[RMDB]
RNA sequence: GGGAACGACUCGAGUAGAGUCGAAAACAGCUAGCCCUCACGUGCAUCUCAGGGAGCGCGGGGUUCACCACACGGAGGUGAAUCUGCGGAACCGUCGGAGUGUCCUUGAGGCACUGGCCGAGUGCACCGAGGUUCGUUCCUUCGGGGGCGGACUUCGAAAAGAAACAACAACAACAAC
Reactivity to 2A3 in 0.01 (KOAc 150mM, MgCl2 10mM, bicine 150mM(pH8.5), 24C), signal-to-noise 9, nucleotides 027 to 126: c040a010g070c040u070a020g020c000c010c000u030c020a080c050g010u020g010c000a080u060c070u030c110a120g030g020g020a130g160c010g000c010g020g030g000g000u000u000c000a000c000c000a050c010a030c120g250g060a110g020g000u000g000a000a000u000c000u040g040c000g020g020a040a030c010c000g050u050c020g020g020a020g000u010g010u010c010c010u090u220g040a140g020g000c000a000c000u030g050g020c000c010g010a010g010u010g000c010a010c010
Reactivity to DMS in 0.01 (KOAc 150mM, MgCl2 10mM, bicine 150mM(pH8.5), 24C), signal-to-noise 9, nucleotides 027 to 126: c100a090g010c090u010a080g010c190c010c020u010c080a090c150g000u000g000c010a020u030c030u010c160a160g010g010g010a170g010c020g000c010g000g000g010g010u000u000c000a000c010c000a140c100a140c200g010g010a100g000g010u000g000a010a000u000c000u000g010c010g000g010a080a240c010c010g000u020c030g000g010a030g010u000g000u000c010c010u030u020g010a120g000g000c000a000c000u000g010g010c010c020g000a070g010u000g000c010a040c030